[RMDB]
RNA sequence: GGGAACGACUCGAGUAGAGUCGAAAAGACGCCUGUGUGGCGAAUCGAGCAAUGGCAUAAGCCGCAAUAGAAGAUGAGAUGGAAGCGGCAAGAUAGAAUGCUCGCAAACAGAUCCAUCUCACAGAGAAAUGCCGUGAUGAUUCGUCAUCACGGCAUUAAAAGAAACAACAACAACAAC
Reactivity to DMS in 0.01 (KOAc 150mM, MgCl2 10mM, bicine 150mM(pH8.5), 24C), signal-to-noise 1, nucleotides 027 to 126: g000a290c110g000c000c040u000g090u000g060u030g070g050c000g030a090a040u020c000g000a170g010c090a090a050u050g000g000c080a030u030a070a040g000c040c020g160c090a100a000u000a090g020a160a150g010a180u000g020a000g000a020u000g000g000a000a050g020c000g000g040c000a030a040g000a110u010a000g060a070a080u000g000c000u030c000g030c070a160a110a030c210a170g000a140u020c000c000a000u000c000u000c040a000c190a100g000a240g000a120
Reactivity to 2A3 in 0.01 (KOAc 150mM, MgCl2 10mM, bicine 150mM(pH8.5), 24C), signal-to-noise 2, nucleotides 027 to 126: g150a020c010g020c000c060u200g080u080g050u090g110g080c000g000a040a020u040c000g000a010g060c030a000a300u230g060g010c130a090u140a080a180g000c000c000g000c040a080a100u090a160g200a120a000g090a160u110g000a000g000a000u000g000g000a170a000g000c000g010g000c000a000a000g090a080u100a000g170a060a040u070g000c010u000c000g040c060a040a050a000c100a060g040a060u000c000c000a000u000c000u000c000a000c000a000g110a000g120a000
Overview
The record gives the reactivity of an RNA of 177 nucleotides to DMS and 2A3. The reactions ran in a buffer of 150 mM KOAc, 10 mM MgCl2 and 150 mM bicine (pH 8.5), at 24 C. For 2A3, 805 sequencing reads were counted. For 2A3 the reverse transcriptase was SuperScript II with manganese. Values cover nucleotides 27 to 126.